[RMDB]
RNA sequence: GGGAACGACUCGAGUAGAGUCGAAAAGAUAUGGAGGCUUUAAGGGAGUCGGUGGAUCGGAAACGAUCCAUCCGACGAGGAUCUUAUGGCCUCCUAAGUCAAAAGUUAUGGUGUUCGCACCAUAACACAGUAGGGUGAAGUUCGCUUCACCCUACUGAAAAGAAACAACAACAACAAC
Reactivity to 2A3 in 0.01 (KOAc 150mM, MgCl2 10mM, bicine 150mM(pH8.5), 24C), signal-to-noise 2, nucleotides 027 to 126: g020a010u040a020u080g000g000a000g000g020c020u010u070u090a010a000g050g040g010a300g050u000c000g000g030u000g000g000a010u000c010g000g000a020a020a010c000g000a000u000c010c010a010u100c070c000g000a000c000g020a020g010g030a020u000c000u010u020a020u020g010g000c010c000u010c000c010u000a010a000g000u010c000a000a000a020a200g010u010u000a000u010g010g010u000g040u060u110c300g050c090a010c020c000a000u000a000a010c020a010
Reactivity to DMS in 0.01 (KOAc 150mM, MgCl2 10mM, bicine 150mM(pH8.5), 24C), signal-to-noise 3, nucleotides 027 to 126: g020a010u000a180u010g000g010a010g010g020c000u000u000u000a020a010g000g010g010a070g020u000c000g040g050u000g000g000a010u000c000g020g000a040a030a080c000g020a010u000c000c000a010u010c010c010g030a000c010g010a060g010g000a080u010c000u010u010a010u000g000g010c010c000u000c000c000u000a010a060g000u010c010a100a100a170a120g020u000u000a010u000g010g020u000g020u000u010c300g010c010a030c010c000a020u000a000a000c010a180
Conditions: 150 mM KOAc, 10 mM MgCl2 and 150 mM bicine (pH 8.5), 24 C. The record gives the reactivity of an RNA of 177 nucleotides to 2A3 and DMS. 2A3 adducts were read by reverse transcription with SuperScript II with manganese. It was measured as part of the RMDB library TTRDES.